[RMDB]
RNA sequence: GGGAACGACUCGAGUAGAGUCGAAAACAGAUUCAAGGUUAGCUCGCUAUGGAUGUGGUGCUCAAUGAAAAACUUGAGUCUGGGAGUUGAUACUCACCACAUGCCUUUUAAAUUAGAUUAAAGCGGACACGAAUGUAUAUUUCGAUAUACAUUCGUGAAAAGAAACAACAACAACAAC
Reactivity to 2A3 in 0.01 (KOAc 150mM, MgCl2 10mM, bicine 150mM(pH8.5), 24C), signal-to-noise 8, nucleotides 027 to 126: c010a010g040a030u070u070c030a030a040g080g050u100u130a030g060c040u040c080g000c020u060a080u180g040g000a010u020g020u010g000g050u030g000c020u010c050a040a080u100g120a080a060a020a050a060c020u010u010g000a000g020u010c030u050g030g070g000a050g010u080u160g080a060u070a140c020u030c020a000c010c010a010c000a020u180g190c010c000u110u120u030u080a100a210a130u110u110a040g070a100u070u100a100a060a000g020c020g010g010a010
Reactivity to DMS in 0.01 (KOAc 150mM, MgCl2 10mM, bicine 150mM(pH8.5), 24C), signal-to-noise 9, nucleotides 027 to 126: c030a050g010a050u000u000c050a030a040g010g010u010u010a110g020c100u010c040g020c030u000a150u010g010g010a040u000g010u000g000g010u000g010c120u000c060a060a040u010g000a100a090a050a080a110c050u000u000g010a010g010u000c030u000g010g010g010a070g010u000u010g010a140u010a090c080u000c010a050c000c000a020c030a020u000g010c010c010u000u010u010u010a030a060a140u010u010a100g010a200u000u000a030a090a060g020c020g010g010a250

This 177-nucleotide RNA was probed chemically with 2A3 and DMS. For DMS, 20,252 sequencing reads were counted. For DMS the reverse transcriptase was MarathonRT.